Chemical mapping of a 207-nucleotide RNA with DMS and 2A3. Conditions: 150 mM KOAc, 10 mM MgCl2 and 150 mM bicine (pH 8.5), 24 C. 2A3 adducts were read by reverse transcription with SuperScript II with manganese. For DMS, 2,789 sequencing reads were counted.
RNA sequence: GGGAACGACUCGAGUAGAGUCGAAAACAGCAUGAAGGGGAUUAGCUGCUUGCCAAAGGACCCCAUCCAGGUGUAGGUUUCCACAUCGUAGGUGAGGAAGAGCCUUUCUGUGCGAGGAUGAGAGCCAAUCGGGAAGAACUGGAUCUCCUGCCACCAGGGUGUAUGCCUUAUUCGUAAGGCAUACACCAAAAGAAACAACAACAACAAC
Reactivity to DMS in 0.01 (KOAc 150mM, MgCl2 10mM, bicine 150mM(pH8.5), 24C), signal-to-noise 2, nucleotides 027 to 156: c040a110g010c070a040u010g040a300a070g000g010g020g010a080u000u000a090g030c060u010g010c050u010u000g030c010c040a050a100a190g010g010a120c000c000c000c000a040u000c030c050a130g040g040u000g000u000a140g000g020u000u000u000c010c010a040c030a010u000c030g000u010a090g040g000u000g000a120g000g000a060a120g030a210g020c020c030u010u000u000c030u000g030u000g000c110g030a270g060g010a130u000g000a110g010a030g000c000c020a080a220u010c140g060g010g030a080a090g010a050a100c010u000g010g000a040u000c010u000c000c040u000g000c050c030a080c040c030a100g040
Reactivity to 2A3 in 0.01 (KOAc 150mM, MgCl2 10mM, bicine 150mM(pH8.5), 24C), signal-to-noise 6, nucleotides 027 to 156: c010a010g080c030a070u170g090a110a050g010g000g000g030a020u040u060a030g070c050u100g030c030u060u070g120c010c010a050a040a050g030g020a130c010c010c020c010a010u050c010c020a050g060g000u070g050u120a040g020g000u050u080u050c030c000a030c000a040u050c060g160u140a090g010g060u040g030a040g040g010a050a050g040a040g070c000c000u030u110u060c080u090g170u110g080c040g030a070g030g000a020u040g040a030g000a010g080c020c010a050a060u150c080g030g000g020a020a020g010a060a040c030u030g030g010a010u000c010u000c000c000u030g060c040c010a050c010c020a040g000